[RMDB]
RNA sequence: GGGAACGACUCGAGUAGAGUCGAAAAGCAAAGAAAUUUUAUCCCAAUAAGGCGAAGCGUGCAAGUCGAAUAAAGCUAAUGCUGCUAGCGAGCACGGGAGCCCUAGCAGACUCCUAGCGAGAAAAAACAAAUCAACUACGUUCGCGUAGUUGAUUUGAAAAGAAACAACAACAACAAC
Reactivity to 2A3 in 0.01 (KOAc 150mM, MgCl2 10mM, bicine 150mM(pH8.5), 24C), signal-to-noise 1, nucleotides 027 to 126: g020c040a040a110a000g100a070a240a000u080u160u130u110a140u030c050c020c000a040a060u140a060a000g050g030c000g030a040a010g040c040g050u070g030c030a090a000g070u030c050g050a070a050u100a120a120a020g000c000u010a080a080u120g010c000u030g000c010u010a010g030c030g170a020g000c040a010c050g060g130g050a060g000c000c000c030u020a000g000c000a020g040a190c000u000c000c070u030a010g010c030g070a030g130a020a120a020a000a000a020
Reactivity to DMS in 0.01 (KOAc 150mM, MgCl2 10mM, bicine 150mM(pH8.5), 24C), signal-to-noise 2, nucleotides 027 to 126: g010c170a090a030a070g020a110a050a090u000u010u000u000a190u000c000c000c010a180a100u010a130a090g020g010c060g000a060a090g010c030g020u000g000c030a050a150g010u020c040g000a090a100u020a050a130a070g030c000u010a050a060u000g000c020u010g000c020u000a030g000c130g000a190g000c010a020c110g000g010g030a140g020c020c020c020u000a060g000c060a060g010a110c010u000c110c020u010a010g010c110g000a070g030a000a030a030a070a030a100
This 177-nucleotide RNA was probed chemically with 2A3 and DMS. For 2A3, 1,002 sequencing reads were counted. Values cover nucleotides 27 to 126. The data come from the RNA Mapping Database (RMDB), library M2PK90.